Overview: An RNA of 177 nucleotides, treated with 2A3 and DMS and read out base by base. For 2A3, 8,541 sequencing reads were counted. The reactions ran in a buffer of 150 mM KOAc, 10 mM MgCl2 and 150 mM bicine (pH 8.5), at 24 C. For DMS the reverse transcriptase was MarathonRT. Source: RMDB library OK2TRN, as collected in RNAgym.

RNA sequence: GGGAACGACUCGAGUAGAGUCGAAAAGUUCUGCUGCCGGCUGCUCCCCGGCUCUGUUGAUGCAAUUCACGCAGUUGCAGACGUUUUACAUCAACCCGAAAAUUCAGCGAAGCAGAGUAAACACUGCGUAGUUAGAACUAUUCGUAGUUCUAACUACAAAAGAAACAACAACAACAAC
Reactivity to 2A3 in 0.01 (KOAc 150mM, MgCl2 10mM, bicine 150mM(pH8.5), 24C), signal-to-noise 5, nucleotides 027 to 126: g010u050u010c000u020g040c020u030g070c060c020g250g000c020u040g010c000u050c010c020c000c010g020g010c080u000c030u060g010u010u030g010a020u020g020c030a080a070u060u070c030a030c110g000c030a170g050u230u220g060c030a030g030a100c040g020u040u030u030u080a030c010a040u030c010a030a040c000c000c000g060a040a040a050a070u210u130c020a000g010c020g040a030a000g000c020a000g010a020g040u110a030a120a030c080a000c060u050g030c040
Reactivity to DMS in 0.01 (KOAc 150mM, MgCl2 10mM, bicine 150mM(pH8.5), 24C), signal-to-noise 8, nucleotides 027 to 126: g010u000u000c010u000g010c040u000g010c110c050g010g020c030u000g010c120u000c090c150c030c040g010g010c300u010c070u010g010u000u010g010a040u000g010c020a030a030u010u000c070a100c110g010c040a230g010u010u010g010c030a100g020a110c110g010u000u000u000u000a040c030a030u010c040a020a040c010c060c030g010a050a040a060a120u000u010c060a040g010c050g010a120a110g000c000a010g000a050g010u010a090a080a090c130a100c050u000g010c190